[RMDB]
RNA sequence: GGGAACGACUCGAGUAGAGUCGAAAACAGAGCUAAUGAGCCACAUACCUACCCAAGGUGAAAGCUCCUUCUCUCGCAAUGUGUAACUCAUGAUUCUCACGACCCCUGGUUGGAGAGAUCCGGACUAUAGACUAGAGGGUGUUCGCACCCUCUAGAACAGCAUAGUCUUCUUCGGAAGACUAUGCUGAAAAGAAACAACAACAACAAC
Reactivity to DMS in 0.01 (KOAc 150mM, MgCl2 10mM, bicine 150mM(pH8.5), 24C), signal-to-noise 1, nucleotides 027 to 156: c060a150g020a070g030c070u000a190a070u000g010a100g070c040c030a110c070a120u000a110c040c010u000a100c090c050c020a180a090g010g020u000g000a020a150a170g000c050u000c000c060u020u010c020u000c020u000c010g020c070a120a080u000g040u010g070u010a050a070c040u030c010a070u000g010a110u000u000c040u000c010a150c020g010a130c000c000c070c070u020g000g030u010u000g030g000a070g000a100g020a110u000c000c040g040g010a080c080u000a120u010a110g020a160c020u000a010g000a020g020g000g020u000g010u000u000c250g040c010a010c000c000c020u000c000u020a000g000a030a230
Reactivity to 2A3 in 0.01 (KOAc 150mM, MgCl2 10mM, bicine 150mM(pH8.5), 24C), signal-to-noise 1, nucleotides 027 to 156: c040a010g020a010g010c020u060a130a100u130g000a000g070c110c050a070c050a040u090a040c020c000u090a150c030c030c000a030a010g020g000u030g020a040a030a000g000c020u030c010c010u120u020c020u000c040u010c050g050c100a110a060u100g000u030g010u100a090a060c040u040c070a060u070g090a090u240u020c010u000c080a050c010g110a040c000c020c040c070u130g020g060u030u020g010g020a060g000a010g000a140u030c030c000g030g030a020c030u010a060u110a190g060a040c010u010a000g000a000g000g000g020u000g020u020u010c030g000c040a000c000c000c010u000c010u000a000g000a000a000
An RNA of 207 nucleotides, treated with DMS and 2A3 and read out base by base. 2A3 adducts were read by reverse transcription with SuperScript II with manganese. For DMS the reverse transcriptase was MarathonRT. It was measured as part of the RMDB library M2RFPK.